[RMDB]
RNA sequence: GGGAACGACUCGAGUAGAGUCGAAAAUCGUGAGAUGUGGUGCCUCACGCGCUCGAGGCGUCCGUGGUCAGAGAGACCACUGACGCAAAAACUCGAGCGCAAAUAAAAUGCAUUACAUCCAGAAUAAGCAUACUACGGACUUCGGUCCGUAGUAUGCAAAAGAAACAACAACAACAAC
Reactivity to 2A3 in 0.01 (KOAc 150mM, MgCl2 10mM, bicine 150mM(pH8.5), 24C), signal-to-noise 1, nucleotides 027 to 126: u120c020g010u000g070a290g000a030u000g010u020g000g020u000g010c000c000u010c020a080c150g000c000g000c000u010c000g000a000g050g070c000g000u000c000c000g000u000g000g000u000c050a070g090a010g050a070g000a300c000c000a000c000u000g000a000c040g000c000a090a140a060a000a000c010u000c000g000a000g000c010g000c000a030a000a000u030a000a110a000a050u120g000c000a000u020u010a000c020a000u000c000c010a000g040a020a190u280a090a000